[RMDB]
Structure probing data (2A3 and DMS) for a 177-nucleotide construct.
For DMS, 14,951 sequencing reads were counted.
Reactivities are given for positions 27 through 126.
As a SHAPE reagent, 2A3 marks flexible, mostly unpaired nucleotides at the ribose 2'-OH.
RNA sequence: GGGAACGACUCGAGUAGAGUCGAAAAGAUAUCAAGGAACUUGUGAUUUAUGCCAUAACUAACAUAACCUCGACAUAUCACAGUUUACUUGCUGUCGCAAAUCCUUAACGUGUUCGCACGUUAAGGACAUAUUCAGUGGGUUCGCCCACUGAAUAUGAAAAGAAACAACAACAACAAC
Reactivity to 2A3 in 0.01 (KOAc 150mM, MgCl2 10mM, bicine 150mM(pH8.5), 24C), signal-to-noise 9, nucleotides 027 to 126: g010a000u010a000u020c000a000a000g010g010a020a010c030u190u180g000u010g010a030u040u100u160a020u040g020c020c010a100u080a220a080c100u070a120a050c050a220u190a100a080c030c080u090c120g030a030c030a040u080a000u020c000a000c000a010g000u010u010u070a300c000u000u010g000c010u010g010u000c000g000c060a070a070a050u010c000c000u000u000a000a000c000g000u000g050u080u060c240g020c100a000c000g000u000u000a000a000g000g000a000
Reactivity to DMS in 0.01 (KOAc 150mM, MgCl2 10mM, bicine 150mM(pH8.5), 24C), signal-to-noise 8, nucleotides 027 to 126: g010a020u000a010u000c010a000a010g000g010a020a020c010u010u000g050u000g000a020u000u010u000a010u000g010c010c020a110u010a100a130c210u010a090a120c210a090u000a090a100c230c120u000c060g010a030c030a010u000a020u000c010a010c000a020g000u000u000u000a080c010u000u000g000c070u000g010u000c010g000c250a070a070a130u000c000c000u000u000a000a000c000g030u000g010u000u010c260g020c000a010c000g010u000u000a000a000g000g000a020